[RMDB]
RNA sequence: GGGAACGACUCGAGUAGAGUCGAAAAGGCGUGUGAACUUCCGAACGGCAUGUGAUUGUGAAGGGCCGGAUCUAAUUUAGUACAUGGGAAAAGUUACUUAGUACUUCGGGAAAAGUUCCUUAGUACCUAUGUGGUUUGGGUUCGCCCAAACCACAUAAAAAGAAACAACAACAACAAC
Reactivity to DMS in 0.01 (KOAc 150mM, MgCl2 10mM, bicine 150mM(pH8.5), 24C), signal-to-noise 1, nucleotides 027 to 126: g000g000c030g000u020g080u040g010a080a150c040u020u000c000c000g020a080a230c100g000g000c050a050u060g000u000g000a080u010u000g000u010g000a180a140g000g080g000c060c000g000g300a080u000c060u030a050a050u060u000u000a160g100u050a060c100a080u010g080g000g000a260a170a150a020g000u000u010a000c000u000u000a100g000u000a030c000u000u000c120g000g000g000a130a060a080a070g000u000u000c010c000u000u000a010g000u000a240c000c030
Reactivity to 2A3 in 0.01 (KOAc 150mM, MgCl2 10mM, bicine 150mM(pH8.5), 24C), signal-to-noise 1, nucleotides 027 to 126: g130g000c100g060u020g050u050g150a050a050c030u070u030c060c000g010a070a000c020g000g050c030a050u170g050u100g140a300u300u080g000u000g010a050a150g100g040g000c030c030g000g000a050u050c050u210a000a220u040u140u000a030g100u090a020c020a070u090g000g010g010a000a000a000a000g010u010u000a000c000u000u000a000g000u000a000c000u030u010c190g000g000g050a000a000a000a000g000u000u000c000c000u000u000a000g000u040a000c000c000